[RMDB]
RNA sequence: GGGAACGACUCGAGUAGAGUCGAAAAUACGAGUUGGGCAAUUAUAUUCUCCGAGGGGUUCGCGCCUCGGCAAAAGCAUUAUAAUAUAUUAUUUAUGGAAAGCCGGAACAUAUCUUUAACCACAAGUCACGAUGUAUCAUUUCGAUGAUACAUCGUGAAAAGAAACAACAACAACAAC
Reactivity to 2A3 in 0.01 (KOAc 150mM, MgCl2 10mM, bicine 150mM(pH8.5), 24C), signal-to-noise 1, nucleotides 027 to 126: u210a030c080g000a000g030u090u030g060g030g000c060a000a030u060u000a080u020a030u080u060c090u000c020c000g000a000g000g010g030g000u040u180c110g030c050g080c090c000u000c000g000g000c000a050a000a220a000g020c000a010u020u070a010u030a240a000u010a030u020a080u220u120a100u080u300u110a130u110g000g100a130a190a000g060c020c010g010g020a000a050c050a000u150a060u060c010u000u170u000a060a070c000c000a020c050a170a060g070u000